[RMDB]
An RNA of 177 nucleotides, treated with 2A3 and DMS and read out base by base. For 2A3, 2,072 sequencing reads were counted.
RNA sequence: GGGAACGACUCGAGUAGAGUCGAAAAGUGCAAUCUCAGCUUACUGAAACCUCUGCCUCCUGGGCUUAAGCCAUCCUCCCACCUCAGCUCCAGAGUAGCUGGGACUACAGGCGCAUGCCACCACACCGGGAAUGUAUGAAUUCGUUCAUACAUUCCCAAAAGAAACAACAACAACAAC
Reactivity to 2A3 in 0.01 (KOAc 150mM, MgCl2 10mM, bicine 150mM(pH8.5), 24C), signal-to-noise 1, nucleotides 027 to 126: g030u030g050c000a090a080u000c010u020c020a020g000c020u060u130a060c000u110g090a080a080a090c020c000u080c010u050g080c000c020u000c010c000u040g050g020g000c000u100u120a050a030g030c000c000a050u040c000c000u030c000c000c010a060c010c010u040c010a010g000c010u030c010c030a040g010a000g140u030a000g050c000u020g000g000g040a010c040u060a030c010a010g010g000c000g000c030a040u110g000c000c000a000c010c030a030c000a020c190c010
Reactivity to DMS in 0.01 (KOAc 150mM, MgCl2 10mM, bicine 150mM(pH8.5), 24C), signal-to-noise 3, nucleotides 027 to 126: g020u000g020c050a090a120u010c020u000c030a090g010c070u010u000a100c060u000g000a090a080a120c080c020u000c050u010g010c030c020u000c020c020u000g030g000g010c040u000u010a060a130g010c040c050a090u000c050c030u000c010c000c020a100c060c000u000c000a020g010c030u000c030c070a110g000a110g010u010a030g010c000u000g000g000g020a060c070u010a040c110a040g000g030c020g010c040a040u000g000c020c020a070c050c040a050c150a070c120c160